The record gives the reactivity of an RNA of 177 nucleotides to 2A3 and DMS. The reactions ran in a buffer of 150 mM KOAc, 10 mM MgCl2 and 150 mM bicine (pH 8.5), at 24 C. 2A3 adducts were read by reverse transcription with SuperScript II with manganese. The data come from the RNA Mapping Database (RMDB), library M2PK50. The 2A3 profile rests on 21,178 reads.
[RMDB]
RNA sequence: GGGAACGACUCGAGUAGAGUCGAAAAUACGCGAGGUUCGCCUCGCGUAAAAGAGGAGCGUAAACGUGAGCGUACGUUGUGCUGUACAUCGUUCCUACACGAAUGCACAUGGUUUCGACCAUGUGAAGAUCUAUGGUGGAUUCGUCCACCAUAGAUCAAAAGAAACAACAACAACAAC
Reactivity to 2A3 in 0.01 (KOAc 150mM, MgCl2 10mM, bicine 150mM(pH8.5), 24C), signal-to-noise 9, nucleotides 027 to 126: u040a000c000g000c000g000a000g010g030u050u080c160g060c050c000u000c000g000c000g000u000a000a000a000a000g090a020g070g040a020g000c040g050u130a120a060a020c010g010u030g070a100g190c090g090u140a020c020g030u040u030g060u080g020c020u030g060u110a030c020a080u020c010g010u000u000c010c000u040a030c070a010c050g190a150a060u270g010c000a000c000a000u000g000g040u040u080u120c210g060a020c000c000a000u000g000u010g000a010a020
Reactivity to DMS in 0.01 (KOAc 150mM, MgCl2 10mM, bicine 150mM(pH8.5), 24C), signal-to-noise 8, nucleotides 027 to 126: u000a000c010g010c000g010a010g010g010u000u020c240g020c000c000u000c000g030c010g010u000a000a010a070a140g010a120g010g000a040g000c020g020u000a090a040a020c030g010u000g010a170g030c270g010u010a010c020g000u000u000g010u000g000c030u000g010u000a080c120a130u000c020g000u000u000c000c010u000a090c220a100c210g000a080a090u010g000c000a000c010a010u000g010g010u000u000u010c190g010a020c000c000a000u000g000u000g000a030a080